[RMDB]
RNA sequence: GGGAACGACUCGAGUAGAGUCGAAAAGUAAUAGAUAGGAGGAUGACGAGAAAGGGUGCGCUGAUAUCCUCCACGAAUGCUAGCAGUAAAUAGAAUAGCGCUCCUAAUACAACUAGCAACAAAAGGAUAAGGUAUCGUGAUGUCAAUCACAUUGCGAUGAGGAUAUAAUGUUCGCAUUAUAUCCUCAAAAAGAAACAACAACAACAAC
Reactivity to 2A3 in 0.01 (KOAc 150mM, MgCl2 10mM, bicine 150mM(pH8.5), 24C), signal-to-noise 5, nucleotides 027 to 156: g020u040a020a090u050a120g070a030u090a060g000g010a000g030g000a010u060g050a070c110g030a020g090a140a060a060g030g010g010u050g010c030g000c000u010g020a010u020a020u130c000c010u000c000c010a020c030g040a070a020u080g010c020u030a010g020c080a020g060u120a040a080a150u110a100g090a070a060u040a030g010c010g000c000u020c000c000u040a070a020u070a020c010a040a040c020u020a000g020c000a020a040c030a050a100a050a010g070g000a060u060a100a050g080g010u100a020u030c010g000u010g010a000u010g020u060c080a090a080u110c010a060c000a020u000u010g010c000g000a020
Reactivity to DMS in 0.01 (KOAc 150mM, MgCl2 10mM, bicine 150mM(pH8.5), 24C), signal-to-noise 4, nucleotides 027 to 156: g030u010a090a100u010a100g010a130u000a070g020g010a020g050g010a070u000g020a230c070g020a180g020a110a110a090g010g010g010u000g030c040g020c030u010g010a160u000a070u000c020c020u000c010c020a090c100g000a100a100u000g010c010u000a020g020c020a170g010u010a060a100a180u010a120g000a100a100u010a090g020c040g020c020u000c030c010u000a080a130u000a070c030a080a040c020u000a030g010c000a050a160c100a040a070a060a070g000g020a090u010a060a090g020g010u000a060u010c000g040u000g010a020u010g000u000c000a120a140u010c160a080c020a020u000u010g010c000g000a070